[RMDB]
Structure probing data (DMS and 2A3) for a 177-nucleotide construct. It was measured as part of the RMDB library OK1LIB. For 2A3, 805 sequencing reads were counted. The RNA was probed in 150 mM KOAc, 10 mM MgCl2 and 150 mM bicine (pH 8.5) at 24 C. For DMS the reverse transcriptase was MarathonRT. 2A3 adducts were read by reverse transcription with SuperScript II with manganese.
RNA sequence: GGGAACGACUCGAGUAGAGUCGAAAAAUUCUAUCAAAAUGUCUGUGUAUGGGUAUUGUGCAGCUGUAUUGACCAAGAGUGCAGAAAUUGAAUUCGCAAACCGGAAAACGCCCAACUCUUUUAAGAGAUGAAAUAGUUCGUUCGCGAACUAUUUCAUAAAAGAAACAACAACAACAAC
Reactivity to DMS in 0.01 (KOAc 150mM, MgCl2 10mM, bicine 150mM(pH8.5), 24C), signal-to-noise 2, nucleotides 027 to 126: a110u020u010c020u040a110u000c060a080a070a170a080u000g020u000c030u000g000u030g000u000a010u000g000g000g000u020a100u030u050g020u010g020c060a040g000c010u030g010u010a060u010u010g000a060c050c100a090a100g010a070g000u020g000c040a070g010a050a070a040u020u020g000a010a130u010u010c060g000c040a040a110a120c040c050g000g000a080a040a060a040c190g000c030c010c030a040a070c030u000c010u010u030u050u020a050a070g000a050g010
Reactivity to 2A3 in 0.01 (KOAc 150mM, MgCl2 10mM, bicine 150mM(pH8.5), 24C), signal-to-noise 2, nucleotides 027 to 126: a000u070u020c060u060a240u160c110a110a050a010a070u170g130u100c130u030g080u060g040u080a050u120g020g000g000u050a050u120u150g060u080g030c010a020g000c000u000g010u080a030u090u140g110a040c030c020a050a010g090a050g150u070g000c000a000g060a070a000a010u130u210g050a020a110u030u020c020g010c070a030a050a120c000c000g030g020a040a000a020a020c060g010c000c000c040a050a090c020u040c000u000u060u050u130a230a120g060a000g000